Overview
Conditions: 150 mM KOAc, 10 mM MgCl2 and 150 mM bicine (pH 8.5), 24 C. Chemical mapping of a 177-nucleotide RNA with DMS and 2A3. For 2A3, 1,018 sequencing reads were counted.
[RMDB]
RNA sequence: GGGAACGACUCGAGUAGAGUCGAAAAUUAAAGAGUUUCCAUUAAGAAAUCCAGUAAUUGCGAUCGGGAAUACAACCUCCCAUCUUGGUUGACUUAAAGGUUCCAUAGGAACCUGGAAGCUAAAAAAGUAAUAGACGUGAUUCGUCACGUCUAUUACAAAAGAAACAACAACAACAAC
Reactivity to DMS in 0.01 (KOAc 150mM, MgCl2 10mM, bicine 150mM(pH8.5), 24C), signal-to-noise 2, nucleotides 027 to 126: u010u000a030a080a160g020a050g000u000u010u010c000c010a300u010u000a040a010g000a120a130a030u010c010c010a060g030u000a120a080u000u030g020c040g000a040u000c130g020g020g010a040a040u010a070c240a080a190c100c190u000c000c010c020a040u000c030u000u000g000g000u000u000g000a300c010u000u000a020a170a130g000g010u000u000c020c010a090u010a230g040g010a010a000c000c000u000g010g000a020a000g040c040u000a010a040a060a100a070a090
Reactivity to 2A3 in 0.01 (KOAc 150mM, MgCl2 10mM, bicine 150mM(pH8.5), 24C), signal-to-noise 1, nucleotides 027 to 126: u140u080a060a060a000g070a000g030u000u010u030c000c000a020u030u020a060a020g030a010a130a020u010c010c020a000g000u160a100a240u200u200g100c050g050a030u020c070g010g040g020a070a000u150a300c010a050a090c010c040u030c010c000c020a000u000c070u000u010g050g000u060u040g050a120c030u020u030a000a060a000g010g010u010u000c030c000a110u260a280g030g000a010a000c010c000u000g000g000a020a000g000c000u150a130a130a000a000a000a000